Chemical mapping of a 177-nucleotide RNA with DMS and 2A3. 2A3 adducts were read by reverse transcription with SuperScript II with manganese. The 2A3 profile rests on 7,506 reads. For DMS, 4,349 sequencing reads were counted. High 2A3 reactivity points to a flexible backbone, as in loops and unpaired stretches.
RNA sequence: GGGAACGACUCGAGUAGAGUCGAAAAGAUAUGGAUCCCACAGGCUCGAUAAGUCUGCAGUCGGAAACGACUGAAAGACUUUUGACGAGCCGUGGGAUCCUAAGUCAAACUCCAGUUCGCUGGAGAACGAUUACACAUCGUUCGCGAUGUGUAAUCGAAAAGAAACAACAACAACAAC
Reactivity to DMS in 0.01 (KOAc 150mM, MgCl2 10mM, bicine 150mM(pH8.5), 24C), signal-to-noise 4, nucleotides 027 to 126: g010a060u010a300u010g010g000a010u000c000c000c000a040c000a140g060g000c010u000c000g020a150u000a010a010g010u010c000u000g000c000a020g000u000c010g010g000a130a110a240c000g010a010c000u020g010a030a130a010g010a020c000u000u000u000u000g010a210c120g000a010g010c000c010g020u000g000g010g000a000u000c000c000u000a010a070g010u000c020a130a120a220c000u000c000c000a010g010u000u010c300g010c010u000g000g000a020g000a050a120
Reactivity to 2A3 in 0.01 (KOAc 150mM, MgCl2 10mM, bicine 150mM(pH8.5), 24C), signal-to-noise 3, nucleotides 027 to 126: g010a000u080a070u160g020g000a000u010c000c020c020a000c000a090g000g000c000u010c020g050a080u030a260a010g000u020c010u030g020c020a000g010u010c000g010g020a100a000a110c000g000a000c000u000g020a090a070a000g010a010c020u050u040u050u180g250a180c080g000a000g000c000c000g000u000g000g000g000a000u000c000c000u010a000a010g000u000c010a000a070a150c010u000c000c000a020g030u070u100c300g020c120u000g000g010a010g000a040a050